[RMDB]
An RNA of 177 nucleotides, treated with 2A3 and DMS and read out base by base.
RNA sequence: GGGAACGACUCGAGUAGAGUCGAAAAGAUAUGGACUACAGACAUGAAGGGCAGGGUCGGAAACGACCCGAUGCUUCAACAGCUGUACAUGUCCUAAGUCAAACUACCGAACUUCGGUUCGGUAGAAUCCAUAUGAGACGUUCGCGUCUCAUAUGGAAAAAGAAACAACAACAACAAC
Reactivity to 2A3 in 0.01 (KOAc 150mM, MgCl2 10mM, bicine 150mM(pH8.5), 24C), signal-to-noise 3, nucleotides 027 to 126: g010a000u050a030u040g010g010a000c010u000a000c050a030g110a080c150a300u200g150a300a300g040g020g010c030a020g030g000g000u000c000g070g000a060a010a000c000g010a010c000c030c010g030a040u020g030c000u150u150c040a250a120c020a060g000c000u050g020u120a080c120a200u220g000u000c010c010u010a050a020g020u030c080a070a120a130c010u000a010c000c000g000a010a010c010u060u100c300g160g000u020u020c010g010g030u000a000g010a010a000
Reactivity to DMS in 0.01 (KOAc 150mM, MgCl2 10mM, bicine 150mM(pH8.5), 24C), signal-to-noise 4, nucleotides 027 to 126: g000a030u000a180u010g000g000a040c010u000a020c020a040g020a060c100a160u000g010a070a110g010g000g020c030a280g010g010g000u010c000g010g000a060a050a100c020g000a010c010c000c000g000a030u010g010c020u000u000c090a050a140c200a080g020c000u010g000u000a040c300a080u010g010u000c000c000u000a020a100g000u000c010a080a130a230c000u000a000c010c000g000a010a010c000u000u000c250g020g000u000u000c000g000g000u000a000g000a080a110